[RMDB]
RNA sequence: GGGAACGACUCGAGUAGAGUCGAAAAAUUGAUUUGAGACGUCGCCUUGCAGUGUUAACUUGGCUCUCAUGAACCUCUUUGAACUUCCACAAAGGGUAGGCUACGGGUGAAACCUCUUAGGCUAAAAAUUGUAUGUACAAUUCGUUGUACAUACAAUAAAAGAAACAACAACAACAAC
Reactivity to 2A3 in 0.01 (KOAc 150mM, MgCl2 10mM, bicine 150mM(pH8.5), 24C), signal-to-noise 6, nucleotides 027 to 126: a000u090u110g040a040u070u020u120g050a050g010a020c080g060u070c040g020c020c000u020u070g020c060a050g030u030g040u270u100a060a050c020u030u040g030g000c000u000c000u000c040a020u060g030a030a040c010c000u020c010u030u010u010g040a070a050c010u130u010c030c010a030c010a030a040a010g040g000g010u030a040g030g020c010u030a020c040g020g020g020u070g060a090a060a040c010c000u030c030u090u090a040g050g000c030u060a080a030a050a070
Reactivity to DMS in 0.01 (KOAc 150mM, MgCl2 10mM, bicine 150mM(pH8.5), 24C), signal-to-noise 9, nucleotides 027 to 126: a100u010u010g000a090u000u000u000g010a090g010a070c140g010u000c090g020c030c010u000u000g020c070a070g010u000g010u010u010a060a070c070u000u000g010g010c030u000c030u000c050a080u000g010a090a100c100c010u010c020u000u000u000g010a070a090c120u000u000c070c050a120c050a030a030a050g000g000g010u000a050g010g010c030u000a050c150g000g000g010u010g000a080a070a110c060c010u000c060u000u010a070g010g010c040u010a020a050a070a060